The data come from the RNA Mapping Database (RMDB), library OK3TST. Chemical mapping of a 207-nucleotide RNA with 2A3 and DMS. For 2A3, 1,838 sequencing reads were counted. For 2A3 the reverse transcriptase was SuperScript II with manganese. Reactivities are given for positions 27 through 156. The reactions ran in a buffer of 150 mM KOAc, 10 mM MgCl2 and 150 mM bicine (pH 8.5), at 24 C.

[RMDB]
RNA sequence: GGGAACGACUCGAGUAGAGUCGAAAAAUACUUAGAUUGGUUCGUGCAUCAGAAUUUCUAGCAGGUCUCAUCUGACCCAUCUGCCCUUUAGGAUUCCUCACAUGGAGAAGAGGCUUCCAUGUCCUGAGCACUUCCCUAGAGAAGAGGGGGUGAAGGAUGCCUAGGGAUUAUUCGUAAUCCCUAGGCAAAAAGAAACAACAACAACAAC
Reactivity to 2A3 in 0.01 (KOAc 150mM, MgCl2 10mM, bicine 150mM(pH8.5), 24C), signal-to-noise 3, nucleotides 027 to 156: a000u120a040c040u050u030a020g040a070u060u070g050g020u030u080c020g000u060g020c010a040u040c020a040g100a130a120u080u120u080c030u090a070g020c040a020g040g020u020c020u000c060a080u010c040u070g060a050c010c000c010a030u010c030u040g020c030c000c000u000u040u070a030g000g010a050u050u060c010c000u020c000a030c010a040u050g040g030a030g000a150a020g060a010g010g070c010u060u040c000c000a020u040g010u060c010c030u020g020a010g030c020a010c000u080u130c020c000c010u040a050g030a000g020a130a050g020a090g020g030g000g000g000u010g010a010a030g010g010a000
Reactivity to DMS in 0.01 (KOAc 150mM, MgCl2 10mM, bicine 150mM(pH8.5), 24C), signal-to-noise 1, nucleotides 027 to 156: a090u000a050c050u000u000a000g030a190u000u010g010g020u000u000c030g040u000g020c090a130u000c060a130g000a070a020u000u000u000c060u010a150g000c040a020g000g010u000c070u000c050a090u000c040u010g050a240c080c030c000a020u000c020u000g020c000c030c010u000u000u000a130g030g000a140u030u000c050c020u000c020a040c030a020u000g000g000a040g020a130a170g010a080g060g000c050u000u010c000c000a090u010g000u020c010c060u000g000a100g040c130a080c050u000u010c010c010c000u010a080g010a120g000a030a100g000a070g000g040g020g040g010u010g010a080a030g010g000a180